[RMDB]
RNA sequence: GGGAACGACUCGAGUAGAGUCGAAAACCGACCCGAAGAGGAAAGAAGGACUCGGACGCGAACCCGUGAGUGGAACCUUGGUCUUUUAUUGGGGGGUACACUCGAGGAGUGGAAGGCGGGGAGGCGGAAGCAAGGCCGUUCGCGGCCUUGAAAAGAAACAACAACAACAAC
Reactivity to DMS in 0.01 (KOAc 150mM, MgCl2 10mM, bicine 150mM(pH8.5), 24C), signal-to-noise 4, nucleotides 027 to 129: c000c000g000a150c080c040c040g000a030a050g020a070g000g020a030a030a030g000a050a060g020g040a030c100u000c090g020g000a080c070g020c120g050a030a040c070c020c070g000u000g020a060g000u000g020g020a180a120c000c000u000u060g000g000u030c000u030u050u030u040a070u010u010g020g000g020g020g040g060u070a100c050a000c010u030c020g020a090g020g030a000g050u030g000g060a070a070g010g060c110g000g000g000g000a000g000g000c100g050g020a090a060g030
Reactivity to 2A3 in 0.01 (KOAc 150mM, MgCl2 10mM, bicine 150mM(pH8.5), 24C), signal-to-noise 6, nucleotides 027 to 129: c000c020g030a060c000c000c020g020a040a050g040a020g030g010a040a030a050g000a040a020g020g020a030c030u020c040g000g010a030c040g040c040g060a060a070c020c000c010g050u080g040a010g020u060g010g010a070a050c000c000u030u060g090g050u140c050u050u240u060u090a260u180u130g000g000g000g000g000g000u040a040c030a010c030u020c010g020a040g010g020a020g010u080g010g030a040a020g020g010c040g020g000g000g000a020g000g000c030g010g010a000a000g050